Source: RMDB libraries RFM100 and RFMREP, as collected in RNAgym. Structure probing data (2A3 and DMS) for a 177-nucleotide construct. For 2A3 the reverse transcriptase was SuperScript II with manganese.
RNA sequence: GGGAACGACUCGAGUAGAGUCGAAAACAAUAGUUGCCAACGACAACUAUGCUCCGGUUGCUCAGGCAGCGUAACGCUGCUUGAAAGACCACAUGAAAGUCCUGGCGGGUUAAGCGCCGCCAGGCGGCUUACGGUAUUGGUUCGCCAAUACCGUAAGAAAAGAAACAACAACAACAAC
Reactivity to 2A3 in 0.01 (KOAc 150mM, MgCl2 10mM, bicine 150mM(pH8.5), 24C), signal-to-noise 5, nucleotides 027 to 126: c060a020a030u010a020g000u000u010g030c040c100a150a060c150g120a120c020a010a010c020u010a020u080g020c020u070c090c050g000g000u010u010g000c020u000c010a010g000g000c000a000g010c010g020u080a070a030c250g000c000u000g000c000u000u000g000a000a000a000g020a000c080c000a020c020a090u300g090a120a010a020g260u020c000c000u000g000g000c000g010g000g000u050u070a060a020g040c050g010c020c000g000c000c000a000g000g000c000g000g000
Reactivity to DMS in 0.01 (KOAc 150mM, MgCl2 10mM, bicine 150mM(pH8.5), 24C), signal-to-noise 9, nucleotides 027 to 126: c110a130a020u000a000g000u000u000g010c030c070a120a130c300g000a280c000a000a010c010u000a000u000g000c040u010c110c200g000g010u000u000g010c300u000c000a010g010g010c000a000g020c000g010u050a140a070c160g020c000u000g000c000u000u000g000a010a040a300g000a010c010c010a150c200a080u060g010a050a000a010g020u020c000c000u010g000g000c000g000g000g000u000u000a150a090g000c250g000c000c000g020c010c000a000g000g010c000g010g010